[RMDB]
RNA sequence: GGGAACGACUCGAGUAGAGUCGAAAAGCACCAGUUAUGUAAGUUUAAGGACUUGUAUAGAGUGUGCUUGAACUACAUGCUUGACCAUAGAAGAAAAUGCAGAUUAAUGCUGCAUUUUAUGACAUAACAUAUUAAAUUGCUUCGGCAAUUUAAUAUGAAAAGAAACAACAACAACAAC
Reactivity to 2A3 in 0.01 (KOAc 150mM, MgCl2 10mM, bicine 150mM(pH8.5), 24C), signal-to-noise 9, nucleotides 027 to 126: g010c010a020c030c010a020g040u170u120a020u010g010u010a040a150g000u000u000u050a090a050g120g010a010c000u040u020g070u080a100u130a100g100a040g030u190g010u050g100c000u000u010g000a030a010c000u050a020c030a040u070g020c010u080u100g050a060c020c020a070u080a130g170a180a010g040a010a080a000a000u000g000c000a000g020a070u090u240a140a040u300g040c000u000g000c000a000u000u010u000u010a060u040g030a010c010a040u150a110a010
Reactivity to DMS in 0.01 (KOAc 150mM, MgCl2 10mM, bicine 150mM(pH8.5), 24C), signal-to-noise 9, nucleotides 027 to 126: g010c030a060c050c030a240g010u020u010a010u000g000u000a010a030g000u000u000u000a110a100g020g000a020c000u000u000g020u010a060u020a060g010a140g010u020g020u010g000c000u000u000g000a060a080c050u010a060c090a050u000g010c060u000u010g000a130c100c070a080u020a070g000a170a100g000a030a010a010a000u000g010c000a010g010a060u010u030a120a080u050g010c000u000g000c000a000u000u000u000u000a030u010g010a200c140a050u020a100a180

Chemical mapping of a 177-nucleotide RNA with 2A3 and DMS. For 2A3 the reverse transcriptase was SuperScript II with manganese. Values are in units of 0.01, from 0 to 300, in steps of 10.